[RMDB]
RNA sequence: GGGAACGACUCGAGUAGAGUCGAAAAUCGAGGUUCGUUUACUUUAAGGUCUGCCUUAAGUAAGUGGUGUUGACGUUUGGGUCCUGCGCAAUGGGAAUUCAUGAACCAUGUCAGGUCCGGAAGGAAGCAGCAUUAAGUGAAACCUCUCAUGUGCCGCGAACUAUAAGUCCUUCGGGACUUAUAGUUCAAAAGAAACAACAACAACAAC
Reactivity to 2A3 in 0.01 (KOAc 150mM, MgCl2 10mM, bicine 150mM(pH8.5), 24C), signal-to-noise 4, nucleotides 027 to 156: u140c040g000a010g010g030u040u030c010g020u020u060u040a030c040u050u120u150a000a020g010g050u120c140u260g300c010c000u010u000a000a000g020u010a070a020g010u030g020g050u040g030u080u020g070a110c080g020u000u060u060g100g000g030u130c000c000u020g000c080g000c070a050a290u020g010g000g040a050a060u210u100c060a090u170g060a050a050c010c000a000u010g020u010c010a000g000g020u010c010c010g020g040a040a020g040g040a080a020g020c020a000g040c000a020u070u040a100a010g050u030g090a050a030a030c000c000u000c010u050c030a050u080g090u090g120c000c040g050c050
Reactivity to DMS in 0.01 (KOAc 150mM, MgCl2 10mM, bicine 150mM(pH8.5), 24C), signal-to-noise 3, nucleotides 027 to 156: u010c040g030a050g040g070u010u000c040g010u000u000u000a030c020u000u000u000a040a020g020g010u010c140u010g010c000c010u000u030a010a060g020u000a020a060g040u000g020g020u000g000u010u000g010a300c030g020u010u000u020g030g010g000u020c000c010u000g020c200g060c030a100a080u000g040g020g020a100a300u000u020c180a150u000g010a210a230c000c020a040u000g000u000c030a040g010g000u000c010c010g000g010a050a070g020g010a200a160g010c020a090g010c030a060u000u010a050a160g010u010g000a100a050a040c000c020u000c010u000c040a120u000g000u000g000c030c040g010c250
Overview:
This 207-nucleotide RNA was probed chemically with 2A3 and DMS. The RNA was probed in 150 mM KOAc, 10 mM MgCl2 and 150 mM bicine (pH 8.5) at 24 C. For 2A3 the reverse transcriptase was SuperScript II with manganese.